[RMDB]
An RNA of 207 nucleotides, treated with 2A3 and DMS and read out base by base. For DMS, 3,128 sequencing reads were counted. Source: RMDB library OK3TST, as collected in RNAgym. For DMS the reverse transcriptase was MarathonRT. For 2A3 the reverse transcriptase was SuperScript II with manganese. Values cover nucleotides 27 to 156. Conditions: 150 mM KOAc, 10 mM MgCl2 and 150 mM bicine (pH 8.5), 24 C.
RNA sequence: GGGAACGACUCGAGUAGAGUCGAAAAAGGUUACCUUGUAUUGUGCAUGUGCCUCCAGUAUAUUUGUAUCAAAACCUUAGAGCUGCAGAUUUAGCUCAAUCAUUUCAUGAAAAAUAUCUGCCACAUCACCUAAUUGGAAAAGAACAUCUCUGUCGUACGUAGGAGGAUGAUUCGUCAUCCUCCUACGAAAAGAAACAACAACAACAAC
Reactivity to 2A3 in 0.01 (KOAc 150mM, MgCl2 10mM, bicine 150mM(pH8.5), 24C), signal-to-noise 5, nucleotides 027 to 156: a000g090g000u070u090a130c020c000u040u050g080u060a050u080u080g030u030g040c100a110u080g020u060g050c010c030u020c070c050a040g060u010a050u020a040u080u160u090g070u040a110u080c050a050a100a020a140c020c020u070u080a050g000a000g030c040u030g010c030a030g020a180u050u100u180a020g000c000u000c000a020a070u060c040a080u070u220u060c050a060u160g080a060a030a010a000a030u060a040u020c010u010g030c020c020a020c000a040u060c010a030c030c010u070a140a090u080u110g050g020a020a060a040a030g090a020a030c010a060u120c040u000c040u080g090u100c050g080u070a090
Reactivity to DMS in 0.01 (KOAc 150mM, MgCl2 10mM, bicine 150mM(pH8.5), 24C), signal-to-noise 2, nucleotides 027 to 156: a090g000g020u000u010a150c070c060u010u000g010u000a080u010u010g040u000g050c130a100u000g010u000g020c030c000u000c120c020a070g000u000a040u010a060u000u000u020g000u050a100u000c030a050a070a060a050c040c030u000u000a110g000a040g020c040u000g010c130a150g010a210u000u000u000a030g010c070u000c040a080a150u000c020a070u020u000u000c050a110u020g000a020a050a020a040a020u000a050u010c060u000g000c000c000a050c030a040u010c030a080c040c050u010a040a100u020u000g040g000a090a070a090a090g040a050a050c050a080u010c070u020c000u010g030u000c030g000u000a080